[RMDB]
RNA sequence: GGGAACGACUCGAGUAGAGUCGAAAAACUUUGGGAAAUUACUACAAACUCCUAUUGAAGAACUCCCUAUACUCUUUCCUUUUCUUCAAAGGAUUCAAGCUCCUUUACAAGCGCUUAUACGGGCAGGACACUCAACAUUAUUCGUAAUGUUGAGUGUAAAAGAAACAACAACAACAAC
Reactivity to DMS in 0.01 (KOAc 150mM, MgCl2 10mM, bicine 150mM(pH8.5), 24C), signal-to-noise 4, nucleotides 027 to 126: a090c050u010u000u000g000g010g020a060a080a160u010u010a090c140u000a120c140a080a140a130c210u000c010c010u010a080u000u000g010a070a050g000a050a120c230u010c010c010c010u000a130u000a080c090u000c050u000u000u000c000c010u000u010u000u000c050u010u000c090a020a000a040g000g010a110u010u000c100a030a060g010c150u010c020c020u010u000u000a080c160a060a100g010c120g010c040u000u020a100u010a080c180g000g000g010c090a070g010g000
Reactivity to 2A3 in 0.01 (KOAc 150mM, MgCl2 10mM, bicine 150mM(pH8.5), 24C), signal-to-noise 3, nucleotides 027 to 126: a020c020u060u040u050g030g000g060a050a120a090u240u080a170c070u070a090c090a070a240a140c040u010c020c020u110a250u080u070g050a090a050g010a060a020c020u030c020c000c000u020a030u050a060c080u110c050u040u070u080c010c000u050u080u080u060c020u060u060c030a030a010a020g010g000a020u020u140c030a040a000g030c000u030c020c000u100u100u050a080c040a100a080g000c020g010c110u090u040a070u040a120c060g000g020g040c010a010g020g050